[RMDB]
Chemical mapping of a 177-nucleotide RNA with 2A3 and DMS. Reactivities are given for positions 27 through 126. The reactions ran in a buffer of 150 mM KOAc, 10 mM MgCl2 and 150 mM bicine (pH 8.5), at 24 C. For 2A3 the reverse transcriptase was SuperScript II with manganese. For DMS, 6,094 sequencing reads were counted. DMS adducts were read by reverse transcription with MarathonRT. The 2A3 profile rests on 3,235 reads.
RNA sequence: GGGAACGACUCGAGUAGAGUCGAAAAGAAGAUGAUGUGUAGGAUAGGUGGGAGGCUUUGAUGUGUGGACGCCAGUCUGCAUGGAGCCGACCUUGAAAUACCACCCUUUAAUGAAAAACAAAUACAAGCGAUAAAUAUAGUUCGCUAUAUUUAUCGCAAAAGAAACAACAACAACAAC
Reactivity to 2A3 in 0.01 (KOAc 150mM, MgCl2 10mM, bicine 150mM(pH8.5), 24C), signal-to-noise 3, nucleotides 027 to 126: g110a050a020g070a070u170g010a030u040g100u010g030u090a010g010g080a040u030a040g000g050u040g020g060g070a140g000g000c000u170u160u080g070a080u080g030u000g010u010g020g000a010c010g030c050c010a010g000u000c010u000g000c000a010u020g020g010a000g000c020c000g030a020c010c000u000u050g010a030a000a000u040a010c000c000a010c000c000c010u000u070u090a160a140u150g060a070a050a050a020a040c070a030a130a030u210a080c060a150a040
Reactivity to DMS in 0.01 (KOAc 150mM, MgCl2 10mM, bicine 150mM(pH8.5), 24C), signal-to-noise 6, nucleotides 027 to 126: g000a060a070g020a080u000g010a030u010g010u020g010u000a030g010g020a130u000a030g010g010u000g010g020g020a210g010g020c010u000u000u020g010a050u000g000u000g020u010g000g010a010c010g010c200c270a100g010u000c000u000g000c000a000u000g000g000a020g010c000c000g000a080c150c030u010u000g000a070a100a070u000a040c010c010a030c020c010c040u000u000u000a060a100u010g000a050a060a060a070a080c140a080a070a080u000a070c230a090a140